Source: RMDB library OK1LIB, as collected in RNAgym. Structure probing data (2A3 and DMS) for a 177-nucleotide construct. For DMS, 5,182 sequencing reads were counted.
RNA sequence: GGGAACGACUCGAGUAGAGUCGAAAAGCUCGGAGACGAGCAAGGCUGACAAAACCCUGUCCCGACCUCCACGUGGUGUCGGCUGGAUAAUGCUGCAUUAUGUUGCAUUUAUCAACCGGGAAGGAAAAGUCCCUAUAGCUUUCGAGCUAUAGGGACUAAAAGAAACAACAACAACAAC
Reactivity to 2A3 in 0.01 (KOAc 150mM, MgCl2 10mM, bicine 150mM(pH8.5), 24C), signal-to-noise 8, nucleotides 027 to 126: g000c010u000c000g020g020a120g010a060c010g000a000g000c000a000a070g020g000c010u010g010a020c050a050a080a120a190c030c010c000u040g140u030c000c000c000g010a010c000c010u060c030c030a180c090g080u170g010g000u010g010u010c000g000g010c010u000g010g010a010u010a000a000u020g000c010u030g010c010a060u140u130a150u300g030u000u030g000c010a010u030u070u140a030u030c010a000a010c010c030g000g000g010a010a050g030g020a020a080a000
Reactivity to DMS in 0.01 (KOAc 150mM, MgCl2 10mM, bicine 150mM(pH8.5), 24C), signal-to-noise 3, nucleotides 027 to 126: g000c000u000c000g010g000a290g000a250c010g000a010g020c000a060a010g010g000c040u040g000a040c060a040a050a090a140c110c000c000u000g020u000c020c010c000g020a030c040c000u000c000c040a070c160g000u030g010g050u020g020u010c000g020g020c010u020g010g000a020u010a000a000u010g000c000u000g000c010a160u020u020a130u030g030u000u000g010c010a020u010u010u020a010u000c000a010a080c130c040g010g000g030a030a010g000g010a150a080a120